[RMDB]
RNA sequence: GGGAACGACUCGAGUAGAGUCGAAAAGUCGAAAUGGUUAUACCACGCCUGUGGAUUUGCCCUAAUGCGUUGGACAUACGCCUUUUCUUGCGCCCGGUAUUGCGCGUUAGGAUCACGUCGGGAACUUCUCCUAGCCGAUGAGGACCUUUGGCGGUCGCAGAGUCAAUUAUUUCGAUAAUUGACUCUGAAAAGAAACAACAACAACAAC
Reactivity to DMS in 0.01 (KOAc 150mM, MgCl2 10mM, bicine 150mM(pH8.5), 24C), signal-to-noise 3, nucleotides 027 to 156: g000u000c080g000a080a070a070u010g000g020u000u000a140u000a160c010c010a050c010g020c050c070u000g050u000g030g000a150u010u010u010g030c090c000c000u000a090a070u000g000c040g040u000u010g010g020a100c070a090u010a070c070g020c000c060u000u010u000u000c050u010u020g010c030g010c030c040c000g040g010u000a040u000u010g020c000g010c070g020u010u000a040g020g000a090u000c020a090c020g020u000c010g020g020g010a080a120c070u000u010c100u000c020c010u010a280g020c040c010g000a050u000g010a110g020g010a190c020c010u000u010u020g030g030c060g010g010u000c040g000
Reactivity to 2A3 in 0.01 (KOAc 150mM, MgCl2 10mM, bicine 150mM(pH8.5), 24C), signal-to-noise 4, nucleotides 027 to 156: g060u070c030g030a030a040a080u140g020g040u120u100a080u060a180c040c020a030c040g090c030c100u160g040u110g060g050a130u070u090u300g060c020c000c000u060a080a040u050g000c030g020u060u150g070g030a070c060a070u140a050c060g000c010c000u100u110u090u090c050u070u100g010c050g020c030c040c010g070g020u230a170u090u180g010c020g000c020g020u010u050a020g020g030a090u060c050a020c080g050u020c030g010g020g050a080a080c030u080u030c040u020c030c010u040a060g060c020c010g030a030u060g050a090g020g020a030c010c000u090u070u100g100g000c080g000g000u030c030g000